[RMDB]
RNA sequence: GGGAACGACUCGAGUAGAGUCGAAAAGAUAUGGAUUCCCCUUACACCCAUCAGCUUUUGACGCCUAUGACUCGGAAACGAGUCUAAGGGCGAUAAGCUGAAUGGGUGUAAGGGGAAUCCUAAGUCACUAAACAUUAGCGUUCGCGCUAAUGUUUAGAAAAGAAACAACAACAACAAC
Reactivity to DMS in 0.01 (KOAc 150mM, MgCl2 10mM, bicine 150mM(pH8.5), 24C), signal-to-noise 1, nucleotides 027 to 126: g020a090u000a300u020g010g000a020u000u000c000c000c000c010u000u000a000c000a010c000c000c000a040u000c000a000g030c000u000u010u000u000g030a260c070g010c000c010u000a300u000g000a000c020u000c000g000g000a130a120a270c000g030a000g000u000c000u000a020a150g010g020g000c000g020a030u000a000a010g010c000u020g000a030a010u000g000g000g010u000g010u000a000a000g000g000g000g000a000a000u010c010c000u000a000a060g010u000c030a250
This 177-nucleotide RNA was probed chemically with DMS. For DMS, 1,630 sequencing reads were counted. Values cover nucleotides 27 to 126. Conditions: 150 mM KOAc, 10 mM MgCl2 and 150 mM bicine (pH 8.5), 24 C. Source: RMDB library TTRINS, as collected in RNAgym.